Chemical mapping of a 207-nucleotide RNA with 2A3 and DMS. Values are in units of 0.01, from 0 to 300, in steps of 10. The DMS profile rests on 1,769 reads. The 2A3 profile rests on 1,944 reads.
RNA sequence: GGGAACGACUCGAGUAGAGUCGAAAACAAUCAACAAUAUGGUUUGUGUAGUUAUGCUGAAAAUCGUUGAGGUUGUAUGGAAUAGGUUAACCGUAAGACCUUAAGUUGAUAAACUUUAAAAUUAAUCAAAAUCAUGUACACUUCGGUGUACAUGAAACAGACAUAUUGUCUUCGGACAAUAUGUCUGAAAAGAAACAACAACAACAAC
Reactivity to 2A3 in 0.01 (KOAc 150mM, MgCl2 10mM, bicine 150mM(pH8.5), 24C), signal-to-noise 4, nucleotides 027 to 156: c030a010a070u150c040a000a100c020a040a100u110a050u180g040g030u010u060u020g060u040g010u030a120g010u060u090a070u120g050c030u070g080a050a040a070a080u090c030g000u010u040g000a030g050g000u050u000g020u040a140u110g020g030a100a110u040a130g020g050u080u060a060a040c000c020g010u040a110a000g010a010c000c000u020u010a080a020g010u010u020g020a060u040a110a060a040c020u090u110u210a040a160a070a100u150u230a040a050u100c030a040a040a000a160u020c000a000u000g000u010a000c000a000c000u040u030c130g120g000u000g000u000a000c000a000u010g000a000a000a000
Reactivity to DMS in 0.01 (KOAc 150mM, MgCl2 10mM, bicine 150mM(pH8.5), 24C), signal-to-noise 1, nucleotides 027 to 156: c030a120a180u000c010a050a170c050a040a050u000a170u000g020g030u020u010u000g050u000g030u010a070g000u000u030a080u000g040c040u050g000a100a100a040a080u000c000g020u000u000g020a150g010g000u050u000g020u000a050u000g010g010a080a170u000a020g050g000u010u020a050a280c050c120g000u010a140a150g000a020c030c010u020u000a010a130g000u000u000g000a090u000a100a070a070c060u000u010u010a060a100a020a180u010u010a170a240u000c070a030a020a070a160u000c000a020u020g010u000a000c010a010c010u000u010c290g060g040u000g010u000a020c000a000u000g000a010a060a080
The data come from the RNA Mapping Database (RMDB), library M2RFPK.